[RMDB]
RNA sequence: GGGAACGACUCGAGUAGAGUCGAAAAUUCACCAACACGUGGGCUGUGCGCAUCCCUGGAGGCCCAGCGGUGGCCAACAGUGUGGCACGGAAGCAUGGGUUCCUCAACCUGGGCCAGGUAGGUGUUCACAAAAGCGUUGAUUCGUCAACGCUUUUGUAAAAGAAACAACAACAACAAC
Reactivity to DMS in 0.01 (KOAc 150mM, MgCl2 10mM, bicine 150mM(pH8.5), 24C), signal-to-noise 4, nucleotides 027 to 126: u000u000c040a110c010c010a120a090c090a060c060g010u010g000g000g030c030u010g010u000g000c030g010c070a060u010c030c060c010u000g010g000a300g010g010c010c010c010a210g000c130g010g030u020g030g010c010c010a050a180c030a040g010u000g030u000g000g010c030a030c040g020g020a090a080g010c060a060u010g010g000g010u000u000c040c020u000c120a070a070c040c040u000g000g010g000c060c040a060g000g010u000a060g000g010u000g000u010u000c100
Reactivity to 2A3 in 0.01 (KOAc 150mM, MgCl2 10mM, bicine 150mM(pH8.5), 24C), signal-to-noise 2, nucleotides 027 to 126: u030u030c010a010c050c010a000a020c080a010c080g010u040g010g090g000c020u030g000u070g020c100g000c050a080u090c010c020c020u010g030g030a030g000g010c050c000c040a050g080c090g110g100u200g050g000c000c000a040a030c040a110g090u050g020u050g080g000c010a020c000g020g020a060a000g040c020a050u040g010g060g000u070u050c020c020u030c020a030a060c000c040u040g020g070g000c050c000a050g000g010u030a020g020g050u060g050u140u080c090